[RMDB]
RNA sequence: GGGAACGACUCGAGUAGAGUCGAAAACAGGUCGGAAACGGAGCAGGUCAAAACUCCCGUGCUGAUCAGUAGUGGGAUCGCGCCUGUGAAUAGCCACUGCACUCCAGCCUGAGCAACAUAGCGAGACAAACGAUACAUAUUUCGAUAUGUAUCGUUUAAAAGAAACAACAACAACAAC
Reactivity to DMS in 0.01 (KOAc 150mM, MgCl2 10mM, bicine 150mM(pH8.5), 24C), signal-to-noise 9, nucleotides 027 to 126: c070a060g010g010u000c040g010g000a060a100a080c080g000g010a110g020c090a040g010g000u010c170a060a080a120a110c090u000c020c010c030g010u000g010c040u000g000a050u010c070a070g030u000a040g010u010g010g010g010a040u000c050g010c120g010c050c040u010g010u000g010a060a050u020a120g000c030c020a050c030u000g000c040a090c090u000c030c030a080g000c030c020u000g000a090g010c050a070a050c090a060u020a080g010c060g000a110g000a090c170
Reactivity to 2A3 in 0.01 (KOAc 150mM, MgCl2 10mM, bicine 150mM(pH8.5), 24C), signal-to-noise 9, nucleotides 027 to 126: c020a010g010g050u070c030g060g030a110a090a070c030g020g020a050g020c080a020g030g060u140c050a020a040a050a110c030u010c010c010c010g010u030g010c020u100g030a130u080c040a020g040u060a010g040u050g020g020g010a030u040c040g000c010g020c050c020u040g000u010g030a040a070u080a050g010c010c010a050c020u030g010c020a020c030u020c010c010a020g000c010c010u060g030a030g040c010a010a070c020a100u140a040g060c040g040a030g020a070c060
Record summary:
Chemical mapping of a 177-nucleotide RNA with DMS and 2A3. Conditions: 150 mM KOAc, 10 mM MgCl2 and 150 mM bicine (pH 8.5), 24 C. For 2A3 the reverse transcriptase was SuperScript II with manganese.